[RMDB]
The record gives the reactivity of an RNA of 177 nucleotides to 2A3 and DMS. For DMS the reverse transcriptase was MarathonRT.
RNA sequence: GGGAACGACUCGAGUAGAGUCGAAAACGCAACGAUGCGAGAUCCAGGUCUCCUAUGCCAUAGGAGUCCCCCGUCCGGUCUCCAUCAUGGUGGAUACUUUCGGAACCGGGAAGGUCUCCGAUAGGGCGACGCGUCAUUAUUUCGAUAAUGACGCGUCAAAAGAAACAACAACAACAAC
Reactivity to 2A3 in 0.01 (KOAc 150mM, MgCl2 10mM, bicine 150mM(pH8.5), 24C), signal-to-noise 2, nucleotides 027 to 126: c000g020c010a020a120c110g020a020u050g000c120g020a010g020a000u040c030c040a030g050g040u010c010u000c010c010u040a030u120g300c070c130a060u040a040g040g000a000g000u010c030c020c010c010c010g110u040c040c050g050g000u000c000u000c000c000a000u020c010a040u100g120g020u020g000g080a110u110a150c020u030u060u000c010g000g030a030a020c040c000g060g020g230a150a150g000g050u030c100u000c070c010g010a020u060a020g070g020g000c090
Reactivity to DMS in 0.01 (KOAc 150mM, MgCl2 10mM, bicine 150mM(pH8.5), 24C), signal-to-noise 2, nucleotides 027 to 126: c020g020c020a140a130c100g010a040u010g000c100g000a040g030a040u000c000c120a120g010g000u000c000u000c000c000u000a000u000g010c210c180a200u000a030g000g000a020g000u000c070c040c050c060c100g000u020c160c100g010g000u010c020u000c000c000a010u000c030a090u000g010g020u000g000g010a140u040a100c030u000u000u000c000g010g000a080a040c020c020g000g000g010a070a130g020g040u000c060u010c000c000g020a060u000a010g080g010g030c130
In probing experiments dimethyl sulfate is read out at A N1 and C N3, which are open when not base-paired. The reactions ran in a buffer of 150 mM KOAc, 10 mM MgCl2 and 150 mM bicine (pH 8.5), at 24 C. Reactivities are given for positions 27 through 126. For 2A3, 1,448 sequencing reads were counted.